The record gives the reactivity of an RNA of 207 nucleotides to DMS and 2A3.
The data come from the RNA Mapping Database (RMDB), library OK3TST.
For DMS the reverse transcriptase was MarathonRT.
High DMS reactivity at an A or C suggests that its Watson-Crick edge is free.
The reactions ran in a buffer of 150 mM KOAc, 10 mM MgCl2 and 150 mM bicine (pH 8.5), at 24 C.
For 2A3, 767 sequencing reads were counted.
RNA sequence: GGGAACGACUCGAGUAGAGUCGAAAAGAUCUGUUGGCCUGCGAUCCCCACCAUUAACUGCCUUUACUGUCAGGUACUCAUCCAUCAUUUGUAUCCCCGAAGUCCAGCACAUGGUAGGUGCUUGGUCAGUGUGUCAUGACUGAAUGAUGAACGUCCAAUUACCCGGAUAGUUCGCUAUCCGGGUAAUAAAAGAAACAACAACAACAAC
Reactivity to DMS in 0.01 (KOAc 150mM, MgCl2 10mM, bicine 150mM(pH8.5), 24C), signal-to-noise 1, nucleotides 027 to 156: g020a130u000c020u020g000u010u000g030g010c030c040u000g040c060g040a100u010c040c020c010c000a120c110c030a010u010u000a070a080c040u010g000c010c020u000u000u000a110c020u010g020u000c050a040g020g020u000a070c050u000c050a080u000c040c020a000u000c040a080u000u000u000g000u000a140u000c070c010c000c040g010a070a130g020u000c000c020a080g000c050a050c040a080u010g000g020u000a090g020g020u020g000c050u010u000g030g020u000c080a070g000u000g010u000g020u010c030a030u000g010a130c040u010g030a040a070u010g000a080u010g000a100a080c080g000u000c000c050a070
Reactivity to 2A3 in 0.01 (KOAc 150mM, MgCl2 10mM, bicine 150mM(pH8.5), 24C), signal-to-noise 2, nucleotides 027 to 156: g050a050u040c030u050g070u050u070g020g000c010c000u020g020c060g050a050u000c000c000c030c020a020c010c000a040u070u130a100a020c070u070g000c020c000u040u130u090a100c060u070g040u020c000a020g000g060u100a110c000u040c050a090u030c050c020a020u040c010a040u170u120u230g100u110a170u110c000c030c000c000g000a050a020g040u010c010c000a000g030c000a020c000a100u090g130g000u020a080g040g020u000g000c020u070u050g050g000u040c020a050g050u040g020u020g000u070c040a050u060g040a070c060u090g040a060a010u030g000a000u030g000a070a040c030g010u030c110c010a030